Chemical mapping of a 177-nucleotide RNA with 2A3 and DMS.
The reactions ran in a buffer of 150 mM KOAc, 10 mM MgCl2 and 150 mM bicine (pH 8.5), at 24 C.
Values cover nucleotides 27 to 126.
DMS adducts were read by reverse transcription with MarathonRT.
RNA sequence: GGGAACGACUCGAGUAGAGUCGAAAAACAUUAAGUUUCGACUUAAUGUAAACCCGAUGAAGCGGCACAUACCGAGCUUCAUACAUCUAAGAGUGCAAAUAAAAAGUUGAUCCUUCGGGAUCAACAAGACGCAGUUAGUAUUCGUACUAACUGCGUCAAAAGAAACAACAACAACAAC
Reactivity to 2A3 in 0.01 (KOAc 150mM, MgCl2 10mM, bicine 150mM(pH8.5), 24C), signal-to-noise 3, nucleotides 027 to 126: a000c020a020u010u000a000a030g000u010u040u100c120g090a010c000u000u000a000a000u010g010u000a060a030a020c000c000c010g000a040u030g000a010a020g000c020g060g000c080a070c020a140u200a080c080c070g050a030g020c000u000u010c010a000u060a050c060a050u040c050u160a170a000g110a040g120u040g060c030a010a090a100u160a050a140a010a010a000g010u000u000g000a000u000c010c000u030u040c270g120g000g000a000u010c010a000a000c000a000a010
Reactivity to DMS in 0.01 (KOAc 150mM, MgCl2 10mM, bicine 150mM(pH8.5), 24C), signal-to-noise 2, nucleotides 027 to 126: a030c000a000u000u000a000a000g000u000u000u000c190g030a050c000u000u010a000a020u000g000u000a070a100a150c010c000c020g010a040u000g000a000a020g040c010g020g010c040a080c150a110u000a130c110c170g000a130g000c020u000u000c000a020u010a070c090a080u000c160u000a080a120g000a100g020u000g000c050a040a140a100u000a090a090a060a110a090g000u000u010g010a000u000c000c000u000u020c190g040g000g000a000u000c000a000a000c000a060a060